[RMDB]
RNA sequence: GGGAACGACUCGAGUAGAGUCGAAAAGCCGCGAUAGAUCACGGCGACACGGUCGGUGAUGGCGCGCACGACACCAAGGUCGUGACUGAUGAAAAGAUAGCUGAGGCCAAAUUUCUCCUGCAAAUCAUAGUCGGAUUUUAUUCGUAAAAUCCGACUAAAAAGAAACAACAACAACAAC
Reactivity to 2A3 in 0.01 (KOAc 150mM, MgCl2 10mM, bicine 150mM(pH8.5), 24C), signal-to-noise 1, nucleotides 027 to 126: g040c000c010g050c020g040a090u120a190g250a060u040c010a000c090g010g040c000g030a010c040a010c130g140g040u140c060g050g050u040g010a050u020g050g000c010g000c000g030c040a020c040g000a000c040a040c090c090a070a020g150g000u000c020g000u010g030a100c040u060g040a100u040g040a090a100a010a150g060a010u080a010g000c020u040g010a060g000g010c050c010a030a060a020u060u080u000c020u030c020c010u040g000c070a000a060a130u060c010a060
Reactivity to DMS in 0.01 (KOAc 150mM, MgCl2 10mM, bicine 150mM(pH8.5), 24C), signal-to-noise 2, nucleotides 027 to 126: g030c110c000g040c020g020a090u000a150g030a140u010c010a060c020g000g010c030g010a100c120a160c150g000g030u010c010g030g010u000g000a080u010g000g010c000g010c070g010c030a030c010g010a020c030a100c110c110a100a140g010g010u000c020g000u000g000a130c060u010g040a090u000g000a030a050a080a110g000a110u000a100g020c080u020g000a070g060g020c050c020a020a100a120u000u000u000c040u000c030c010u010g000c130a060a040a120u000c140a070